[RMDB]
Structure probing data (DMS) for a 177-nucleotide construct. It was measured as part of the RMDB library TTRINS. The reactions ran in a buffer of 150 mM KOAc, 10 mM MgCl2 and 150 mM bicine (pH 8.5), at 24 C.
RNA sequence: GGGAACGACUCGAGUAGAGUCGAAAAGAUAUGGACGAAUUCAACCCGACCUUGCAGGCAACAGCAAUAUGUCGGAAACGACAUGAUUGACAUGCCUGGGAGGUCGGGUUGAAUUCGUCCUAAGUCACAUAUGUAUUGCCUUCGGGCAAUACAUAUGAAAAGAAACAACAACAACAAC
Reactivity to DMS in 0.01 (KOAc 150mM, MgCl2 10mM, bicine 150mM(pH8.5), 24C), signal-to-noise 2, nucleotides 027 to 126: g020a070u000a300u000g010g000a010c000g020a030a040u000u020c010a010a020c000c000c000g000a010c000c000u000u000g000c010a020g000g020c000a040a140c300a150g020c010a020a020u000a000u000g010u010c000g030g010a070a090a200c020g010a010c000a000u000g010a010u000u000g000a070c090a300u000g000c000c020u000g020g000g010a020g020g020u000c000g020g000g030u020u000g000a000a000u000u000c000g000u000c000c000u000a000a050g000u000c040a300